[RMDB]
RNA sequence: GGGAACGACUCGAGUAGAGUCGAAAAUACUCACAUUUCGAUGUGAGUAACUGUCUAGUCGCUAGCGCCGAUCAAGCGCAAGCGACUAGACUUUAUUGAUCGCCAGCUAACCUUUCGAGGUUAGCAAUAAGAUACCAUAGUUCGCUAUGGUAUCUUAAAAAGAAACAACAACAACAAC
Reactivity to DMS in 0.01 (KOAc 150mM, MgCl2 10mM, bicine 150mM(pH8.5), 24C), signal-to-noise 9, nucleotides 027 to 126: u000a010c000u000c000a000c000a010u000u000u010c160g020a030u000g010u000g000a020g010u000a020a050c050u000g010u000c000u000a000g000u000c000g020c000u000a030g020c000g020c000c040g000a160u020c300a110a120g000c000g010c000a040a020g010c000g010a000c000u000a000g000a000c000u000u000u000a070u010u010g010a090u000c100g010c060c040a120g010c000u000a000a010c000c000u000u000u010c160g010a020g010g000u000u000a000g010c000a040a020
Reactivity to 2A3 in 0.01 (KOAc 150mM, MgCl2 10mM, bicine 150mM(pH8.5), 24C), signal-to-noise 6, nucleotides 027 to 126: u030a000c000u010c000a000c000a010u040u090u080c190g120a010u010g000u010g000a000g000u000a000a030c010u000g010u010c000u000a010g010u010c010g010c030u010a050g010c010g020c030c020g170a280u190c100a090a000g010c000g000c020a010a000g000c020g020a000c000u010a000g000a000c000u000u010u000a000u000u030g050a010u070c050g060c120c020a010g000c000u000a000a000c000c010u070u100u190c280g100a000g000g000u000u000a000g010c000a000a000